[RMDB]
RNA sequence: GGGAACGACUCGAGUAGAGUCGAAAAUCCAAGGGGUUCGCCCCUUGGAAAAUAUGGGAAACCGAGCAUUCCGGUCGACUCCGGAGAGCCAAAGUCAAAUAAAAACCGUUGGGUUCGCCCAACGGAAGGACAAUUCUAUGUUCGCAUAGAAUUGUCCAAAAGAAACAACAACAACAAC
Reactivity to DMS in 0.01 (KOAc 150mM, MgCl2 10mM, bicine 150mM(pH8.5), 24C), signal-to-noise 1, nucleotides 027 to 126: u000c000c000a030a010g010g000g020g010u010u000c210g030c020c010c000c010u000u010g000g000a010a010a000a080u010a120u000g010g000g000a110a120a120c010c020g030a230g010c060a100u000u000c000c000g010g000u000c040g000a080c020u000c000c040g010g010a010g000a170g000c090c050a040a040a070g010u000c060a180a110a110u000a080a070a180a180a120c000c000g000u010u000g000g010g030u010u040c300g000c020c000c000a010a010c000g000g000a000a000
Reactivity to 2A3 in 0.01 (KOAc 150mM, MgCl2 10mM, bicine 150mM(pH8.5), 24C), signal-to-noise 1, nucleotides 027 to 126: u010c000c000a000a010g040g000g000g010u050u080c140g120c000c020c040c000u000u000g000g000a000a000a000a010u100a020u040g000g010g040a080a040a010c030c010g000a070g000c040a120u160u000c000c010g000g040u020c050g050a000c050u000c190c000g000g010a050g010a000g030c010c030a050a030a020g050u080c030a070a130a090u140a070a100a020a050a050c000c010g000u010u010g030g010g040u010u060c240g090c000c000c000a000a000c000g010g000a000a030